[RMDB]
RNA sequence: GGGAACGACUCGAGUAGAGUCGAAAAACGAUAACCUUGCUUCGGUUCUCCACACCAGCGGGACCGGUGCCUGGUACGAAUCCUGGGGUCGUCGUUGUACUCGUGCGAGUAAUCCACGAUCGCUACACGGCUAGAUCACUUUCGAGUGAUCUAGCCGAAAAGAAACAACAACAACAAC
Reactivity to DMS in 0.01 (KOAc 150mM, MgCl2 10mM, bicine 150mM(pH8.5), 24C), signal-to-noise 1, nucleotides 027 to 126: a020c110g000a080u010a050a000c020c000u010u000g000c000u060u000c000g000g030u000u000c000u000c060c070a170c140a100c260c210a110g000c300g030g000g030a070c000c010g090g000u000g000c000c130u000g000g010u010a060c000g020a000a040u000c030c040u000g020g020g050g000u050c000g000u000c110g060u000u000g040u030a000c210u000c020g000u010g010c090g000a000g020u100a150a020u000c050c010a000c000g010a040u040c080g000c190u040a060c170a020
Reactivity to 2A3 in 0.01 (KOAc 150mM, MgCl2 10mM, bicine 150mM(pH8.5), 24C), signal-to-noise 2, nucleotides 027 to 126: a000c020g010a050u080a030a030c000c000u000u010g000c000u050u050c000g060g000u150u020c030u010c040c000a060c010a050c040c080a060g020c110g000g000g010a000c000c000g000g020u000g000c020c010u000g000g010u060a050c000g010a000a050u030c000c010u010g000g060g000g000u000c030g000u010c010g010u010u040g100u020a010c000u010c030g040u080g170c190g010a000g030u030a000a130u040c000c000a000c000g010a010u030c060g040c060u020a020c080a010